[RMDB]
This 170-nucleotide RNA was probed chemically with 2A3 and DMS.
RNA sequence: GGGAACGACUCGAGUAGAGUCGAAAAAUGCCAUCUUUAUUUCUGAUAGAAAAAUCAAGAAAUACCCUUGUAUGGUAGGUCCUGAUUAUGCUUACUUCAAUGGUGCUAUCAUCCGUGAUAGUGAUGUAACCCCCUGGGUUCGCCCAGGGGAAAAGAAACAACAACAACAAC
Reactivity to 2A3 in 0.01 (KOAc 150mM, MgCl2 10mM, bicine 150mM(pH8.5), 24C), signal-to-noise 8, nucleotides 027 to 129: a000u050g000c000c000a020u020c050u030u060u010a000u000u000u000c010u000g060a010u040a080g300a100a130a020a020a010u060c120a180a060g020a000a010a020u050a050c060c020c010u070u060g110u220a040u020g010g020u010a030g000g070u010c000c000u030g080a140u050u250a110u230g050c040u040u030a060c010u020u130c050a080a130u120g090g010u150g040c020u020a020u040c020a020u040c070c170g050u010g030a030u000a010g030u020g030a020u080g020u050a040a040c010
Reactivity to DMS in 0.01 (KOAc 150mM, MgCl2 10mM, bicine 150mM(pH8.5), 24C), signal-to-noise 2, nucleotides 027 to 129: a070u010g020c030c010a070u020c080u010u060u030a020u000u000u000c000u060g010a040u030a090g060a030a060a040a110a000u010c040a060a080g020a030a030a010u020a020c270c110c090u000u000g020u060a050u020g040g010u020a000g010g050u010c000c000u010g000a090u070u040a060u000g030c090u090u030a030c000u000u000c050a060a100u010g000g000u020g030c020u000a040u020c020a050u040c100c130g000u040g040a050u050a020g040u040g030a070u040g010u040a140a030c110
The 2A3 profile rests on 13,029 reads. DMS adducts were read by reverse transcription with MarathonRT. The reactions ran in a buffer of 150 mM KOAc, 10 mM MgCl2 and 150 mM bicine (pH 8.5), at 24 C.